About this RNA
Structure probing data (2A3 and DMS) for a 207-nucleotide construct. The reactions ran in a buffer of 150 mM KOAc, 10 mM MgCl2 and 150 mM bicine (pH 8.5), at 24 C. Reactivities are rounded to 0.1 and cut off at 0 and 3. The data come from the RNA Mapping Database (RMDB), library M2RFPK. The 2A3 profile rests on 4,016 reads. DMS adducts were read by reverse transcription with MarathonRT.
RNA sequence: GGGAACGACUCGAGUAGAGUCGAAAAAUCUUUAAGCAGAUGGCAGGUUCACCCCGUACGGUGCGGAAGUUCGCGCUUCCGUGAAACGCGAAAACCGGACGGUGGCUGCAAGUCGCAUCGCAAAACCUAUAGCUUGUUAGGUUCGCCUAACAAGCAAGUCAGAUAUAAGUUUCGACUUAUAUCUGACAAAAGAAACAACAACAACAAC
Reactivity to 2A3 in 0.01 (KOAc 150mM, MgCl2 10mM, bicine 150mM(pH8.5), 24C), signal-to-noise 4, nucleotides 027 to 156: a000u090c060u050u150u090a140a030g030c090a050g010a020u040g080g020c030a030g030g040u120u090c020a060c010c010c000c010g000u000a010c000g000g020u030g040c010g010g000a010a010g010u140u240c080g020c020g000c110u000u000c000c000g000u020g030a080a090a020c100g020c030g070a070a050a000a020c010c010g000g010a000c010g020g090u160g070g000c080u010g000c020a020a030g060u070c040g000c050a010u010c030g010c040a020a070a050a110c010c020u110a080u080a190g000c000u000u000g000u000u000a000g000g030u040u020c090g020c030c000u000a000a000c000a000a000g000c000a000a000
Reactivity to DMS in 0.01 (KOAc 150mM, MgCl2 10mM, bicine 150mM(pH8.5), 24C), signal-to-noise 1, nucleotides 027 to 156: a090u000c080u000u000u020a070a150g050c060a110g010a080u010g000g010c030a050g030g010u020u000c090a070c010c020c000c010g000u000a010c000g010g020u000g050c060g010g020a030a040g020u000u000c200g030c130g020c010u000u000c010c130g040u010g000a010a020a020c010g020c050g000a060a060a160a070c010c000g000g010a020c000g010g010u000g030g030c100u000g000c040a050a060g100u020c040g020c040a080u000c030g000c040a080a070a060a080c050c020u000a060u010a170g020c000u000u020g000u000u000a010g000g020u000u010c300g090c000c010u000a030a020c000a000a000g020c000a020a000